[RMDB]
RNA sequence: GGGAACGACUCGAGUAGAGUCGAAAACAUGUUUUGCUUCUCUCUCAGACUGCCUUCCUGCUUCUGGGCUAACCUGUUCCAGCCAGGCUCCUCAUGUGACCUCGCAGUUGAGAAGCCCAUUAUCGUGGGGCAUCCUUUUGCCUACAGCCCCUGGUUACUAAAACAAAUAGUUCGCUAUUUGUUUUAGAAAAGAAACAACAACAACAAC
Reactivity to DMS in 0.01 (KOAc 150mM, MgCl2 10mM, bicine 150mM(pH8.5), 24C), signal-to-noise 3, nucleotides 027 to 156: c050a220u010g000u000u000u000u010g000c010u000u000c010u000c040u010c030u010c040a100g030a120c050u000g000c030c040u000u000c030c030u010g010c050u000u000c030u000g030g010g010c060u000a070a090c070c040u010g010u000u010c060c040a100g020c190c060a070g000g020c030u000c010c010u000c040a070u000g020u010g010a080c090c060u000c070g010c020a130g010u000u000g000a060g020a070a070g020c010c040c030a100u000u000a040u010c070g020u000g010g020g010g020c020a070u000c070c050u000u000u000u000g020c020c030u010a110c060a130g000c010c010c010c010u000g020g020u000u000a260
Reactivity to 2A3 in 0.01 (KOAc 150mM, MgCl2 10mM, bicine 150mM(pH8.5), 24C), signal-to-noise 5, nucleotides 027 to 156: c050a050u150g080u060u140u090u140g040c010u010u030c020u010c000u000c000u030c050a040g010a200c060u040g030c000c020u040u080c020c020u070g030c050u120u050c030u060g010g000g020c010u030a080a130c030c030u070g060u160u110c050c040a010g010c020c010a020g030g000c060u040c010c010u110c050a130u130g080u110g080a160c010c020u040c060g000c020a030g000u100u070g040a020g010a040a010g010c000c010c020a110u140u140a080u110c100g060u070g000g000g000g010c010a060u100c000c040u060u160u180u160g060c020c020u100a090c060a040g010c000c000c010c000u010g050g000u040u060a040

Source information
The record gives the reactivity of an RNA of 207 nucleotides to DMS and 2A3. For 2A3 the reverse transcriptase was SuperScript II with manganese. DMS adducts were read by reverse transcription with MarathonRT. The DMS profile rests on 10,069 reads. In probing experiments dimethyl sulfate is read out at A N1 and C N3, which are open when not base-paired. It was measured as part of the RMDB library OK3TST.